Chemical mapping of a 177-nucleotide RNA with DMS. The DMS profile rests on 838 reads. For DMS the reverse transcriptase was MarathonRT.
RNA sequence: GGGAACGACUCGAGUAGAGUCGAAAAUUUAUAGUUGCAAAAACCAAGGCCCAAAGAGGUUGAGUACCAUGCAAAGCUUCACAGCUAGUUAGUGGCAGAGCUGGGAUUCAACACCAGGCACCACUUCGACAGGGUGUAAUUUCGAUUACACCCUGUCAAAAGAAACAACAACAACAAC
Reactivity to DMS in 0.01 (KOAc 150mM, MgCl2 10mM, bicine 150mM(pH8.5), 24C), signal-to-noise 2, nucleotides 027 to 126: u030u030u030a070u000a110g000u020u020g030c100a030a070a100a080a100c060c020a090a150g000g020c080c020c020a040a090a140g000a180g000g010u000u000g000a040g010u000a030c010c010a000u000g060c020a020a140a210g000c040u020u000c080a050c060a150g000c110u020a050g000u000u000a090g060u000g000g010c050a040g000a300g020c020u020g000g000g000a050u000u000c100a050a080c070a110c010c050a100g000g020c030a080c050c140a040c120u010u010c160